Chemical mapping of a 177-nucleotide RNA with DMS and 2A3. The 2A3 profile rests on 4,029 reads. Conditions: 150 mM KOAc, 10 mM MgCl2 and 150 mM bicine (pH 8.5), 24 C.

RNA sequence: GGGAACGACUCGAGUAGAGUCGAAAAUCUGUUUACAAGUAAUCGUUAAGUCCAUCUCUGACUACGGUUGCGGAAACAGAAGCCAGUUGGCGUCAAGUCCGAGAUGGACUAUUGGUAGAACUGGUCACUACUCGAUUGUAUUCGUACAAUCGAGUAGAAAAGAAACAACAACAACAAC
Reactivity to DMS in 0.01 (KOAc 150mM, MgCl2 10mM, bicine 150mM(pH8.5), 24C), signal-to-noise 8, nucleotides 027 to 126: u000c030u000g000u000u000u000a070c080a070a090g010u000a050a050u000c030g010u000u010a080a040g010u000c010c060a040u010c080u000c040u000g010a020c010u000a100c110g020g000u000u000g000c140g000g010a090a030a040c040a120g010a070a100g000c000c010a140g020u000u000g020g020c010g010u000c060a070a030g010u000c000c070g000a060g000a050u000g010g010a010c000u000a010u010u010g000g010u000a100g010a050a040c020u000g000g010u000c180a210
Reactivity to 2A3 in 0.01 (KOAc 150mM, MgCl2 10mM, bicine 150mM(pH8.5), 24C), signal-to-noise 2, nucleotides 027 to 126: u010c000u010g040u040u080u080a080c030a060a010g000u010a020a010u020c020g010u020u120a080a000g000u000c020c010a110u010c030u000c020u080g000a010c000u030a030c030g090g050u000u010g030c010g080g040a020a010a000c040a030g080a030a000g060c000c010a040g070u020u010g060g090c010g000u040c040a030a000g000u000c010c000g030a050g020a080u130g000g000a000c000u000a010u010u000g010g000u000a010g000a050a000c000u000g030g000u070c030a010
Reactivities are rounded to 0.1 and cut off at 0 and 3. For DMS, 12,757 sequencing reads were counted. The data come from the RNA Mapping Database (RMDB), library OK2TRN.